[RMDB]
RNA sequence: GGGAACGACUCGAGUAGAGUCGAAAAUCAGAAUCAGGCCGGAGUGUUUAGCGCUCCGUAAACACGGUCGUACAUCCAGCCGGUAGCCUGGUUCCUUGCAUUGAGUGAUGUACGGAGUUUAUAGCGCAAAAGAAAGACCUGUUCGCAGGUCUUUCAACAUGAGUAUGACGUUCGCGUCAUACUCAUGAAAAGAAACAACAACAACAAC
Reactivity to 2A3 in 0.01 (KOAc 150mM, MgCl2 10mM, bicine 150mM(pH8.5), 24C), signal-to-noise 3, nucleotides 027 to 156: u080c010a010g010a000a000u010c000a000g000g050c000c000g000g030a020g000u040g060u100u210u300a120g070c020g000c000u010c000c000g000u030a000a020a000c150a010c040g050g010u040c010g030u030a010c000a030u010c030c050a010g040c000c000g010g020u000a000g000c010c000u000g000g000u000u000c020c010u030u110g050c010a140u070u180g060a070g050u130g030a060u000g000u000a020c030g050g020a100g010u080u140u060a210u110a040g060c050g000c070a070a070a050a060g010a000a000a000g000a000c000c000u010g020u030u120c210g000c060a000g000g010u020c000u000u010u010c000a000a000
Reactivity to DMS in 0.01 (KOAc 150mM, MgCl2 10mM, bicine 150mM(pH8.5), 24C), signal-to-noise 1, nucleotides 027 to 156: u000c030a030g010a070a030u010c000a040g010g020c020c040g010g010a080g040u010g000u000u000u000a220g030c050g020c010u010c040c000g020u000a010a040a100c090a090c050g030g000u000c050g020u010a000c060a050u010c010c050a130g000c030c040g030g040u000a080g030c010c010u000g000g050u020u000c000c020u020u000g010c150a170u000u010g000a100g010u000g010a040u000g030u010a040c020g000g000a210g020u000u000u000a130u000a100g000c030g000c040a120a030a100a120g010a000a010a040g000a010c010c000u010g010u000u010c270g040c020a050g030g000u000c000u000u010u010c000a040a140
This 207-nucleotide RNA was probed chemically with 2A3 and DMS. DMS adducts were read by reverse transcription with MarathonRT. It was measured as part of the RMDB library M2RFOK.